Source information
An RNA of 177 nucleotides, treated with 2A3 and DMS and read out base by base. The RNA was probed in 150 mM KOAc, 10 mM MgCl2 and 150 mM bicine (pH 8.5) at 24 C. DMS adducts were read by reverse transcription with MarathonRT. It was measured as part of the RMDB library RFM100. High 2A3 reactivity points to a flexible backbone, as in loops and unpaired stretches.
RNA sequence: GGGAACGACUCGAGUAGAGUCGAAAAUGUCGCGGCAGUUAACGUGCAAUGCUCAUUGGCAGGACUUACCAAGUCUGGGGGCCGAUGAGGGUUGGCUCAAAGUAGGGUUUUGACUUGAAAACUCAAGCCUAAGCAGGCAGUUCGCUGCCUGCUUAGGAAAAGAAACAACAACAACAAC
Reactivity to 2A3 in 0.01 (KOAc 150mM, MgCl2 10mM, bicine 150mM(pH8.5), 24C), signal-to-noise 3, nucleotides 027 to 126: u110g000u030c000g010c000g040g000c000a020g000u060u050a080a020c030g020u030g020c000a060a010u100g070c000u000c000a010u000u000g000g000c010a030g000g000a010c000u050u070a270c080c130a050a000g010u000c000u010g000g000g000g200g030c000c000g000a010u010g010a010g000g000g000u010u000g020g000c010u050c120a040a080a050g080u140a090g030g010g000u030u030u000u060g120a070c070u040u210g080a020a060a000a050c040u020c050a040a010g080
Reactivity to DMS in 0.01 (KOAc 150mM, MgCl2 10mM, bicine 150mM(pH8.5), 24C), signal-to-noise 2, nucleotides 027 to 126: u010g000u040c060g050c000g010g000c030a030g000u010u000a060a180c100g030u030g030c030a080a070u030g030c000u000c000a030u000u030g000g170c000a120g050g000a020c000u000u040a120c300c300a130a080g000u000c000u030g060g000g030g000g030c000c000g010a000u000g000a000g000g020g000u010u010g000g000c040u010c110a000a160a090g050u000a140g000g010g000u000u000u030u000g000a020c080u000u000g050a130a020a060a070c090u010c060a080a080g000